[RMDB]
RNA sequence: GGGAACGACUCGAGUAGAGUCGAAAACAGAACAUUAGUCUAAAUACAGGCCUGAUGAGCGGAAGCCAACUCGAUAAUAGUCAGCAGGGCCUCAUUAGUGCAGCAAAGCAAGUCAAAAUUAUUAGUACCUGGGUAUAAAUUUCGAUUUAUACCCAGGAAAAGAAACAACAACAACAAC
Reactivity to DMS in 0.01 (KOAc 150mM, MgCl2 10mM, bicine 150mM(pH8.5), 24C), signal-to-noise 2, nucleotides 027 to 126: c020a080g020a100a150c070a040u000u030a070g010u010c050u000a080a090a100u000a120c120a060g020g010c030c000u000g010a080u000g030a050g000c050g010g010a130a090g000c030c070a110a040c040u010c050g030a130u010a050a100u000a090g030u000c040a070g010c080a080g000g010g020c050c010u020c020a020u010u000a080g050u010g020c010a070g020c050a060a050a100g010c070a010a080g030u010c090a070a090a090a080u000u020a090u010u000a100g000u000a150
Reactivity to 2A3 in 0.01 (KOAc 150mM, MgCl2 10mM, bicine 150mM(pH8.5), 24C), signal-to-noise 1, nucleotides 027 to 126: c020a040g110a110a030c030a160u060u150a090g080u000c000u120a000a120a050u190a060c030a010g040g030c040c000u000g040a040u070g040a050g030c020g050g090a030a020g020c000c000a080a050c030u020c080g010a000u090a300a010u050a140g070u040c000a000g000c020a050g100g020g040c000c040u000c010a010u000u040a060g000u100g100c010a030g020c010a030a050a100g050c000a020a020g000u010c030a020a090a080a080u100u130a130u040u060a040g030u010a040